[RMDB]
RNA sequence: GGGAACGACUCGAGUAGAGUCGAAAAUCCUCCUUUCUUCUUCUUCCAUCGAUCCACUUUCCGAGUGCCUCUUCUCUCCCCCUCCGGGUUCUCCUCGCAUCGGACUGGCUCAUUCUCGGAGAGGGCGUACGCGUGGCGUUCGCGCCACGCAAAAGAAACAACAACAACAAC
Reactivity to DMS in 0.01 (KOAc 150mM, MgCl2 10mM, bicine 150mM(pH8.5), 24C), signal-to-noise 2, nucleotides 027 to 129: u020c010c040u000c030c030u020u070u000c050u050u000c030u000u020c040u020u030c070c080a070u080c090g020a140u000c030c030a190c100u000u000u000c000c040g040a110g050u000g030c110c020u000c060u020u050c010u020c010u000c030c000c020c020c100u010c020c060g030g050g000u030u000c030u020c020c030u040c090g020c030a070u020c000g040g010a080c000u020g000g000c040u000c030a100u040u040c050u000c030g000g000a090g030a100g000g000g000c060g050u000a060c040
Reactivity to 2A3 in 0.01 (KOAc 150mM, MgCl2 10mM, bicine 150mM(pH8.5), 24C), signal-to-noise 3, nucleotides 027 to 129: u020c030c000u010c000c000u060u080u040c000u010u010c000u030u010c000u030u020c050c000a060u060c020g080a050u020c040c020a080c040u020u040u020c010c010g010a020g030u060g060c000c010u020c000u120u020c030u010c000u050c010c000c000c000c000u000c010c030g000g030g000u060u000c010u000c010c000u000c020g040c010a100u080c040g030g000a050c010u040g000g020c010u030c020a090u130u030c010u010c020g010g020a000g000a000g020g020g050c000g010u040a000c060